[RMDB]
Chemical mapping of a 207-nucleotide RNA with 2A3 and DMS. It was measured as part of the RMDB library PDB130. 2A3 adducts were read by reverse transcription with SuperScript II with manganese. The RNA was probed in 150 mM KOAc, 10 mM MgCl2 and 150 mM bicine (pH 8.5) at 24 C.
RNA sequence: GGGAACGACUCGAGUAGAGUCGAAAAUAAGAUAUCAGAGGAGAUCAAGAAGUCCUACUGAUCAAACAUGCGCUUCCAAUAGUAGAAGGACGUUAAGCAUUUAUCAUUGAACUAUAAUUGUUCAUUGAAGUCAUUGAUGCAAACUCCUUGGUCACACCCUUCAUUACGACUUCGGUCGUAAUGAAGGAAAAGAAACAACAACAACAAC
Reactivity to 2A3 in 0.01 (KOAc 150mM, MgCl2 10mM, bicine 150mM(pH8.5), 24C), signal-to-noise 4, nucleotides 027 to 156: u110a020a030g040a030u070a010u100c010a010g000a000g030g010a030g060a120u080c150a080a110g080a150a020g130u000c020c010u050a240c020u020g010a030u030c040a000a130a040c080a140u170g030c040g030c110u100u040c010c000a030a160u050a090g090u020a030g040a100a000g010g010a000c110g040u020u050a150a020g000c000a000u020u020u060a070u070c000a030u000u000g000a000a000c010u020a050u150a300a260u200u090g000u000u000c000a000u000u010g020a040a010g020u080c040a060u020u200g000a000u000g000c000a000a000a050c010u020c000c010u010u030g070g050u070c020a040c010a010c060
Reactivity to DMS in 0.01 (KOAc 150mM, MgCl2 10mM, bicine 150mM(pH8.5), 24C), signal-to-noise 1, nucleotides 027 to 156: u000a080a130g010a220u000a140u000c030a100g030a150g030g020a070g000a110u000c030a100a220g010a050a100g020u000c020c000u010a230c080u000g000a010u000c020a040a060a120c080a050u010g000c090g000c040u000u010c030c030a080a120u000a050g000u000a110g020a090a050g000g000a050c090g050u000u000a000a150g050c040a020u000u000u010a150u030c020a030u000u020g000a030a010c000u000a170u000a060a140u000u000g000u000u010c010a070u000u020g000a020a170g000u000c130a150u000u010g000a050u000g000c020a100a110a050c010u000c020c000u010u000g050g010u000c050a090c060a150c040